The data come from the RNA Mapping Database (RMDB), library M2PK50. This 177-nucleotide RNA was probed chemically with DMS and 2A3. 2A3 is a SHAPE reagent: it acylates the 2'-hydroxyl of flexible nucleotides of all four kinds. The reactions ran in a buffer of 150 mM KOAc, 10 mM MgCl2 and 150 mM bicine (pH 8.5), at 24 C.

RNA sequence: GGGAACGACUCGAGUAGAGUCGAAAAGCCGAGAAGUUCGCUUCUCGGCGAAGGGCUGUUUUUCUCGCUGACUUUGAGCCCCAAACAAAAAAUGUCAGCAAAAUCCGGAACGGUUCGCCGUUCCGAACAAAUGUGCGAAGUUCGCUUCGCACAUUUGAAAAGAAACAACAACAACAAC
Reactivity to DMS in 0.01 (KOAc 150mM, MgCl2 10mM, bicine 150mM(pH8.5), 24C), signal-to-noise 1, nucleotides 027 to 126: g000c020c000g000a010g000a020a010g010u010u000c230g000c010u000u000c000u000c010g010g000c010g010a030a070g000g000g010c000u010g010u000u010u000u000u000c060u010c150g000c000u010g000a000c010u000u010u000g010a040g010c020c000c000c190a050a060a100c080a000a040a090a000a010a020u000g020u000c000a010g000c000a110a060a070a100u010c130c000g030g000a000a000c000g000g020u000u010c210g030c000c000g000u010u000c000c000g010a000a000
Reactivity to 2A3 in 0.01 (KOAc 150mM, MgCl2 10mM, bicine 150mM(pH8.5), 24C), signal-to-noise 1, nucleotides 027 to 126: g000c000c000g000a000g000a000a010g020u090u300c230g050c130u000u020c000u000c000g020g000c000g000a010a000g000g000g000c000u020g130u130u000u000u010u070c090u030c070g010c010u010g010a000c000u050u020u030g030a010g020c000c010c000c010a060a150a050c030a020a120a030a000a020a000u090g000u010c020a000g000c000a000a080a000a000u060c050c010g010g000a000a000c000g040g030u020u040c160g000c070c010g000u010u000c000c000g000a020a050